[RMDB]
RNA sequence: GGGAACGACUCGAGUAGAGUCGAAAACUUGAAUACGUCAGCUAUUAAUGAGAUAUGUCUAUUAUCUGCUAACACGUACAUCAUAUUUUUAAUGUAUGGAUUAAUGUCAGUAAAUACACCAUUAAUCCCUAAUUAAAUGGUUCGCCAUUUAAUUAGGAAAAGAAACAACAACAACAAC
Reactivity to 2A3 in 0.01 (KOAc 150mM, MgCl2 10mM, bicine 150mM(pH8.5), 24C), signal-to-noise 9, nucleotides 027 to 126: c000u020u100g040a060a010u060a040c020g030u030c070a020g000c030u060a030u220u070a120a050u130g080a040g020a110u120a070u230g150u020c070u020a090u070u010a040u050c060u020g000c000u020a050a020c030a000c080g020u020a020c010a060u040c030a030u050a200u180u170u060u070u180a110a100u110g050u070a090u130g010g000a010u010u030a030a020u040g060u090c020a010g010u060a030a110a100u160a050c040a010c030c000a000u000u020a010a010u030c000
Reactivity to DMS in 0.01 (KOAc 150mM, MgCl2 10mM, bicine 150mM(pH8.5), 24C), signal-to-noise 9, nucleotides 027 to 126: c050u000u010g010a070a220u010a030c060g010u000c110a070g020c050u010a110u000u000a040a050u000g010a040g010a090u000a060u010g010u000c090u010a050u000u000a030u000c100u000g000c020u000a060a090c300a040c030g010u000a010c080a060u000c020a030u000a030u010u010u000u010u010a050a080u010g000u000a050u000g010g000a050u000u000a020a030u000g000u010c100a080g010u000a050a060a110u010a070c110a100c180c010a010u000u000a020a020u000c050
Chemical mapping of a 177-nucleotide RNA with 2A3 and DMS. The 2A3 profile rests on 13,615 reads. DMS adducts were read by reverse transcription with MarathonRT. DMS (dimethyl sulfate) methylates the pairing face of unpaired adenines and cytosines.